[RMDB]
RNA sequence: GGGAACGACUCGAGUAGAGUCGAAAAGUGCAGAACGGCCAGAACGGGCACUCCCAUGCGCAGUACAUUGUGGGAUCUGUACCUGGCUGGCGCGAGGGGAGCUCAGAUAUGAAUCAGCCGCUACUGGUCCCUUUAAUACGUUCGCGUAUUAAAGGGAAAAAGAAACAACAACAACAAC
Reactivity to 2A3 in 0.01 (KOAc 150mM, MgCl2 10mM, bicine 150mM(pH8.5), 24C), signal-to-noise 2, nucleotides 027 to 126: g060u070g050c010a000g010a170a000c020g000g000c020c000a030g020a070a030c040g020g000g010c030a030c080u040c000c010c010a030u110g020c050g000c040a040g030u150a170c040a190u200u190g010u200g070g040g020a070u060c100u190g060u060a080c000c010u020g060g000c020u080g090g010c010g000c020g030a080g000g050g000g000a030g010c010u010c030a060g040a160u150a040u180g070a050a050u040c010a050g040c020c020g030c040u130a130c020u050g020g070
Reactivity to DMS in 0.01 (KOAc 150mM, MgCl2 10mM, bicine 150mM(pH8.5), 24C), signal-to-noise 6, nucleotides 027 to 126: g020u010g020c030a030g010a120a100c040g000g010c000c040a180g010a090a140c200g000g000g000c040a090c070u010c010c010c020a090u010g020c050g020c020a060g010u000a200c080a090u010u010g010u020g020g010g010a080u010c120u010g000u000a070c040c030u000g010g000c030u010g020g000c030g010c020g000a120g020g000g000g000a080g010c040u000c030a060g010a120u000a070u010g010a120a090u010c110a150g000c010c000g020c040u000a100c030u000g010g010
The data come from the RNA Mapping Database (RMDB), library OK2TRN. Structure probing data (2A3 and DMS) for a 177-nucleotide construct. Values cover nucleotides 27 to 126. The reactions ran in a buffer of 150 mM KOAc, 10 mM MgCl2 and 150 mM bicine (pH 8.5), at 24 C. The DMS profile rests on 7,973 reads. DMS adducts were read by reverse transcription with MarathonRT.